[RMDB]
RNA sequence: GGGAACGACUCGAGUAGAGUCGAAAAGACGUUGUCUCGUAUCUGAACAGUCAGAUUAGCUGUUUAGAUGACACAAGGCAACUUGUGUUACGAAUAGAGUGAAUCUGGCUCUGUGACGACGUCGCCACUCGUGCUUUCUAUUCGUAGAAAGCACGAGAAAAGAAACAACAACAACAAC
Reactivity to DMS in 0.01 (KOAc 150mM, MgCl2 10mM, bicine 150mM(pH8.5), 24C), signal-to-noise 2, nucleotides 027 to 126: g010a010c010g030u000u000g000u000c000u000c070g000u010a140u040c140u040g000a070a060c160a000g000u000c050a040g000a060u000u000a090g020c010u000g000u000u000u000a050g000a270u000g000a000c000a010c010a000a000g010g000c240a070a140c000u000u000g000u000g010u000u000a030c010g000a020a010u000a010g010a030g020u010g000a030a010u000c050u000g000g010c000u000c050u010g000u010g000a000c010g000a000c000g000u010c020g010c030c010a160
Reactivity to 2A3 in 0.01 (KOAc 150mM, MgCl2 10mM, bicine 150mM(pH8.5), 24C), signal-to-noise 2, nucleotides 027 to 126: g000a000c000g000u000u000g010u000c000u010c030g060u070a160u070c100u080g080a060a010c010a010g000u000c000a000g010a040u040u050a010g010c000u000g050u050u010u030a080g020a100u000g010a010c000a020c000a010a010g000g000c010a040a060c000u000u000g000u010g000u000u010a000c000g030a010a000u030a000g060a020g100u120g000a010a030u000c000u000g000g000c000u000c010u050g030u020g000a000c020g000a000c000g000u020c000g010c000c000a040